Description: Conditions: 150 mM KOAc, 10 mM MgCl2 and 150 mM bicine (pH 8.5), 24 C. An RNA of 207 nucleotides, treated with 2A3 and DMS and read out base by base. For 2A3, 1,435 sequencing reads were counted.
[RMDB]
RNA sequence: GGGAACGACUCGAGUAGAGUCGAAAAUGGACCAGCUGGCCUGAUCCAGCAGAAGUGGAUGGAGAUACACUGAAUGGGGCUCCUGGGAGGCGUGAGUUGAAGGGGAAGGAAGAGAAGAGACCUCCAAAGUAAGGGAAGAGUGAAAAAUGAGAAGGACUAUUCAGCAGUUAUUCGUAACUGCUGAAUAAAAAGAAACAACAACAACAAC
Reactivity to 2A3 in 0.01 (KOAc 150mM, MgCl2 10mM, bicine 150mM(pH8.5), 24C), signal-to-noise 2, nucleotides 027 to 156: u040g020g030a000c030c040a010g000c010u060g020g020c020c090u060g020a130u050c010c000a010g020c030a010g070a090a010g060u080g040g030a050u040g040g000a050g000a030u080a040c070a010c060u090g060a070a080u110g010g000g080g000c040u050c030c020u030g030g020g000a030g030g000c060g030u080g020a050g000u040u080g050a070a000g040g000g010g000a000a010g010g010a010a060g010a000g020a070a030g050a010g000a020c010c000u030c020c020a090a040a050g030u090a040a060g040g000g000a030a020g040a010g030u060g040a010a030a000a000a000u170g020a020g000a060a000g010g000a000c000
Reactivity to DMS in 0.01 (KOAc 150mM, MgCl2 10mM, bicine 150mM(pH8.5), 24C), signal-to-noise 2, nucleotides 027 to 156: u000g010g000a030c050c020a110g000c020u000g030g040c100c050u000g020a060u000c000c010a050g000c080a100g000a080a070g000u000g010g010a080u000g020g030a120g020a100u000a110c040a130c050u000g010a080a260u000g040g010g050g050c020u000c020c010u000g000g010g010a030g000g030c060g000u010g010a080g030u000u000g020a080a070g030g020g020g000a060a050g020g030a130a080g020a060g000a030a060g020a160g010a140c040c000u000c020c030a050a050a090g030u010a040a080g020g020g010a020a030g010a060g000u010g010a010a050a000a050a100u000g000a100g000a060a040g000g010a090c120